[RMDB]
RNA sequence: GGGAACGACUCGAGUAGAGUCGAAAAAACUUUUACACAAGAUGAGAAGUUGAACCUACAGAGGCAUAUAGAUUCGCAAGGAGGUUGCAGAAACGCGGUCAGCACUGUAAAUGAAGCGCAGGGAUGCGCUACGCGAUUUAUUCGUAAAUCGCGUAGCAAAAGAAACAACAACAACAAC
Reactivity to 2A3 in 0.01 (KOAc 150mM, MgCl2 10mM, bicine 150mM(pH8.5), 24C), signal-to-noise 3, nucleotides 027 to 126: a010a000c110u120u030u020u190a070c070a020c030a080a080g050a180u110g010a010g010a060a020g010u020u030g030a050a050c010c000u010a020c020a020g080a050g060g030c040a010u090a020u050a110g090a080u120u140c040g000c030a010a030g050g010a020g090g000u030u070g000c000a000g060a050a090a010c070g020c030g000g030u030c040a010g020c020a010c010u020g030u100a000a080a100u100g050a060a000g020c030g000c040a010g000g060g020a020u060g030c030
Reactivity to DMS in 0.01 (KOAc 150mM, MgCl2 10mM, bicine 150mM(pH8.5), 24C), signal-to-noise 6, nucleotides 027 to 126: a020a010c030u010u000u000u000a140c050a080c080a130a090g010a300u010g010a090g000a030a020g010u000u000g000a110a140c030c010u000a050c130a060g010a090g020g020c050a030u000a090u000a080g010a080u010u000c090g010c080a060a070g010g010a060g010g000u000u000g020c050a060g000a050a030a060c140g020c070g010g020u010c060a060g010c040a050c040u000g010u000a040a070a080u010g000a070a050g000c050g010c030a030g000g000g000a110u010g010c110
Structure probing data (2A3 and DMS) for a 177-nucleotide construct. Reactivities are given for positions 27 through 126. It was measured as part of the RMDB library OK2TST.